Chemical mapping of a 177-nucleotide RNA with DMS.

RNA sequence: GGGAACGACUCGAGUAGAGUCGAAAAGUCGCGAUCUUGAGGAGGCCAACAUCCAGCACGAGUCCACCCUGGCUAACCUGCGCAAGAAGCACAACGAUGCCGUCGCCGAGAUGGCCGAGCAGGUUGAGGAGGCUGAUACUUUCGAGUAUCAGCCUCCAAAAGAAACAACAACAACAAC
Reactivity to DMS in 0.01 (KOAc 150mM, MgCl2 10mM, bicine 150mM(pH8.5), 24C), signal-to-noise 1, nucleotides 027 to 126: g000u010c010g010c040g040a210u000c030u000u010g010a130g000g010a090g000g000c070c090a020a090c110a030u000c040c050a050g000c060a070c070g000a070g000u010c030c000a160c060c000c040u000g040g010c090u000a030a010c000c000u000g000c040g020c070a090a140g070a250a130g010c050a090c130a030a210c080g030a180u010g030c000c010g010u040c020g040c100c190g010a120g030a150u000g010g000c010c060g000a110g020c000a000g010g030u000u000g000a040